[RMDB]
RNA sequence: GGGAACGACUCGAGUAGAGUCGAAAAAGCACUGGUACGAUACGUCGUACCAGUGCAGUCGGUGGGAUGGAACGCAAUUAAAUACAUGUGUGACGUGUAUUUGCGAACGACGUAAUUAUUUUUCAAAAUCACGCUAUCGUGUUCGCACGAUAGCGAACGAUGAGAACUGGUUCGCCAGUUCUCAUCGAAAAGAAACAACAACAACAAC
Reactivity to 2A3 in 0.01 (KOAc 150mM, MgCl2 10mM, bicine 150mM(pH8.5), 24C), signal-to-noise 4, nucleotides 027 to 156: a000g020c000a000c010u000g000g000u000a000c000g000a000u010a040c260g160u020c000g010u000a000c010c000a010g010u000g000c000a000g010u010c020g050g060u120g020g030g020a060u050g010g010a070a030c010g000c020a040a110u160u090a100a080a010u040a010c010a020u020g080u040g130u180g150a070c000g000u010g010u000a050u000u040u060g000c010g010a030a030c080g050a010c050g010u060a100a110u200u120a140u090u150u060u030u040c110a090a010a030a060u170c030a040c080g000c000u000a010u000c010g000u000g000u030u030c100g010c070a000c000g000a000u000a010g000c000g000a000a000
Reactivity to DMS in 0.01 (KOAc 150mM, MgCl2 10mM, bicine 150mM(pH8.5), 24C), signal-to-noise 1, nucleotides 027 to 156: a050g050c010a020c020u000g000g000u010a000c000g010a070u000a120c240g150u000c000g010u000a020c010c000a000g000u010g010c010a000g020u010c100g020g000u000g010g000g020a200u010g000g000a070a120c030g010c030a080a060u030u000a060a140a030u010a020c020a010u020g030u020g030u010g030a050c060g000u020g010u000a010u000u000u000g000c050g000a070a090c000g020a100c020g040u000a080a130u000u000a150u000u010u000u000u000c020a100a080a060a140u020c150a160c010g060c000u000a010u000c000g040u010g020u010u020c300g050c000a030c020g000a050u000a020g050c000g020a010a060